[RMDB]
RNA sequence: GGGAACGACUCGAGUAGAGUCGAAAACGGUCAACAAACGGGUAGUUAUCGUUAACUACGCUGCCAUGAACCAGGUCCCUCUGGGCAUGGAGGACCUUGAAGAAUGCUCCGAUGAGGAGAUUGAUAGCAUGUACGUGGCGAUCAAGCACUACCACGAGAUGUAGUGAGUGUUCGCACUCACUACAUCAAAAGAAACAACAACAACAAC
Reactivity to 2A3 in 0.01 (KOAc 150mM, MgCl2 10mM, bicine 150mM(pH8.5), 24C), signal-to-noise 6, nucleotides 027 to 156: c030g030g070u140c080a050a030c020a090a200a040c050g020g000g000u000a000g020u020u040a080u090c130g030u100u080a100a000c010u020a010c050g020c060u040g030c000c010a030u030g020a030a100c010c010a020g000g030u100c080c090c000u010c000u020g100g020g020c050a040u130g000g010a010g030g020a020c000c000u020u090g050a090a040g060a060a060u160g040c000u000c010c010g110a160u290g030a030g010g010a010g000a010u010u020g000a000u020a010g000c070a050u180g020u060a020c070g010u040g000g000c010g020a010u050c080a100a000g070c030a030c040u020a020c010c030a050c080g070a070
Reactivity to DMS in 0.01 (KOAc 150mM, MgCl2 10mM, bicine 150mM(pH8.5), 24C), signal-to-noise 3, nucleotides 027 to 156: c050g040g000u000c030a100a150c060a030a080a110c050g020g010g020u000a030g020u000u000a050u000c170g000u010u010a060a040c010u000a050c020g020c050u000g010c000c010a060u000g000a090a120c010c030a070g010g000u000c040c040c080u000c000u000g030g010g000c110a040u010g010g030a120g020g000a030c030c000u000u000g010a120a120g000a110a080u000g020c030u000c000c000g010a190u000g010a300g000g010a090g010a080u000u000g000a090u000a040g000c030a090u000g000u000a050c020g040u000g000g020c000g000a050u000c040a080a130g020c120a100c020u000a060c010c000a090c030g020a200